[RMDB]
RNA sequence: GGGAACGACUCGAGUAGAGUCGAAAAGAGCUGCAGAAAGCCUUCGGCGACACCGAGGCCGUAGCGCUCAUCGACCUGAUGUAUAACAAGGUCGGCGACCUGCAGGACAACAUCGUCAAUAUGUACGGCUCGCUCGGGAAGGGCGUGUCGGUCACGGCAAUAACCCAAUAUUCGUAUUGGGUUAUUGAAAAGAAACAACAACAACAAC
Reactivity to DMS in 0.01 (KOAc 150mM, MgCl2 10mM, bicine 150mM(pH8.5), 24C), signal-to-noise 5, nucleotides 027 to 156: g010a080g030c000u000g070c020a140g010a180a120a060g010c000c010u010u000c030g010g010c000g000a180c040a300c030c010g000a050g000g020c010c020g020u000a150g020c040g000c040u000c040a070u000c020g020a040c010c010u010g000a170u010g020u010a170u010a130a130c120a110a020g020g010u000c010g020g010c000g000a070c040c030u000g000c020a060g000g010a160c040a090a090c050a130u000c060g000u000c050a100a140u010a080u000g030u000a060c030g020g000c010u000c030g010c020u010c020g000g030g000a160a160g020g010g000c020g030u000g010u000c010g000g010u010c050a080c030g010g000
Reactivity to 2A3 in 0.01 (KOAc 150mM, MgCl2 10mM, bicine 150mM(pH8.5), 24C), signal-to-noise 9, nucleotides 027 to 156: g070a030g040c080u090g000c030a010g080a110a100a020g020c010c010u100u150c020g020g010c070g080a070c040a080c130c050g030a080g070g000c010c010g030u050a020g010c020g000c060u020c020a040u060c020g000a010c000c000u060g080a120u080g200u090a160u080a260a090c070a120a010g000g000u000c010g000g000c000g010a040c010c010u010g000c020a020g030g070a040c030a090a040c010a210u120c070g100u060c040a080a070u130a070u260g070u080a030c010g000g000c010u000c010g020c000u020c020g070g040g090a140a150g060g010g000c010g000u030g010u010c010g000g020u060c040a020c040g050g000

This 207-nucleotide RNA was probed chemically with DMS and 2A3. Values are in units of 0.01, from 0 to 300, in steps of 10. The reactions ran in a buffer of 150 mM KOAc, 10 mM MgCl2 and 150 mM bicine (pH 8.5), at 24 C.